[RMDB]
RNA sequence: GGGAACGACUCGAGUAGAGUCGAAAAGCUGUUAUUUUCUCCUUUUUAAAGACAGGAAACUGAGGCUUAGAGAUGCUCCUGUUUCUGAGAUCAUGCAGCCAGUGACACAUGACCAGGAAGCUUUAUGGAUCUUCUUAUGCUUCGGCAUAAGAAGAUCAAAAGAAACAACAACAACAAC
Reactivity to 2A3 in 0.01 (KOAc 150mM, MgCl2 10mM, bicine 150mM(pH8.5), 24C), signal-to-noise 1, nucleotides 027 to 126: g050c010u020g110u210u100a090u030u080u040u040c030u100c000c000u060u090u050u050u290a140a300a040g020a040c080a060g000g000a030a100a000c040u050g030a060g060g000c000u030u060a020g020a010g010a160u120g030c020u010c030c000u010g020u030u070u000c060u030g060a080g010a120u030c030a060u060g030c020a000g030c040c010a060g060u070g080a000c000a010c010a100u060g080a060c010c000a010g010g060a050a000g000c000u070u170u090a130u150g130
Reactivity to DMS in 0.01 (KOAc 150mM, MgCl2 10mM, bicine 150mM(pH8.5), 24C), signal-to-noise 1, nucleotides 027 to 126: g020c000u000g020u000u000a030u000u000u000u030c010u000c060c010u000u000u000u020u020a080a080a100g000a060c140a130g000g000a040a020a040c080u000g000a120g000g020c020u000u000a080g000a120g000a150u000g010c020u000c020c020u000g000u000u010u000c070u010g000a110g020a140u020c020a040u000g010c090a050g010c000c070a100g000u000g010a130c110a120c060a060u010g020a050c070c000a110g010g000a040a080g000c060u000u010u000a130u020g030